[RMDB]
An RNA of 177 nucleotides, treated with 2A3 and DMS and read out base by base. Values cover nucleotides 27 to 126. It was measured as part of the RMDB library TTRDEL.

RNA sequence: GGGAACGACUCGAGUAGAGUCGAAAAGAUAUGGACUGCUUUGAUCGCUCCAUACUUUGAUCUCGGAAACGAGGGAGUAUUAAGCGGGAGCAGUCCUAAGUCAAAGCCGUUUGUUCGCAAACGGCAAGUAUCAAUCUAUGUUCGCAUAGAUUGAUACAAAAGAAACAACAACAACAAC
Reactivity to 2A3 in 0.01 (KOAc 150mM, MgCl2 10mM, bicine 150mM(pH8.5), 24C), signal-to-noise 9, nucleotides 027 to 126: g020a020u050a040u100g000g010a000c010u000g090c030u150u130u110g180a210u300c020g010c020u040c070c030a010u010a010c000u120u150u130g220a240u070c000u000c000g010g030a120a070a030c020g000a010g000g020g010a000g000u010a010u070u120a160a030g010c000g020g010g000a000g000c000a000g000u000c000c000u000a030a000g010u010c040a080a070a050g000c000c010g000u000u010u010g060u040u090c300g000c160a000a000a000c000g000g000c000a000a000
Reactivity to DMS in 0.01 (KOAc 150mM, MgCl2 10mM, bicine 150mM(pH8.5), 24C), signal-to-noise 9, nucleotides 027 to 126: g000a040u000a300u000g010g000a010c010u000g010c000u000u000u010g000a100u010c010g010c000u000c100c230a030u000a010c010u000u000u010g010a100u000c000u000c000g000g000a100a080a170c010g010a020g000g000g000a010g000u000a010u000u000a060a030g010c010g010g000g000a010g010c010a010g000u000c000c000u000a010a060g010u000c040a100a140a160g010c000c000g010u000u000u000g010u000u010c200g020c010a010a010a000c000g010g010c010a000a020